[RMDB]
RNA sequence: GGGAACGACUCGAGUAGAGUCGAAAAAUUCUCCUUAUUAGAAGCAAGUCACUAGAUUCAGCCCAUGAUCAAGGAGAAGGGAUGAAUACAAGAGCUUGAAUACAGGGAGUCUGUGGUCACUGGGGACCGUCAUAGAGGCUGCCUAACUCACCUGGCACCUUUUAUGGUCGUUCGCGACCAUAAAAGGAAAAGAAACAACAACAACAAC
Reactivity to 2A3 in 0.01 (KOAc 150mM, MgCl2 10mM, bicine 150mM(pH8.5), 24C), signal-to-noise 2, nucleotides 027 to 156: a010u060u080c050u060c000c000u070u130a140u070u110a220g110a300a060g070c010a000a000g010u060c040a030c300u060a040g040a140u070u070c030a020g010c040c030c050a200u110g080a210u150c150a080a140g120g020a180g160a010a040g000g000g010a010u020g020a020a030u080a050c030a080a000g000a020g000c010u020u030g020a040a020u060a050c050a020g020g000g000a000g020u000c040u030g100u040g000g000u100c000a030c080u130g000g000g060g000a070c040c020g030u060c050a000u100a160g050a050g010g010c060u080g060c010c020u050a090a040c010u000c110a120c050c080u070g000g040c070a030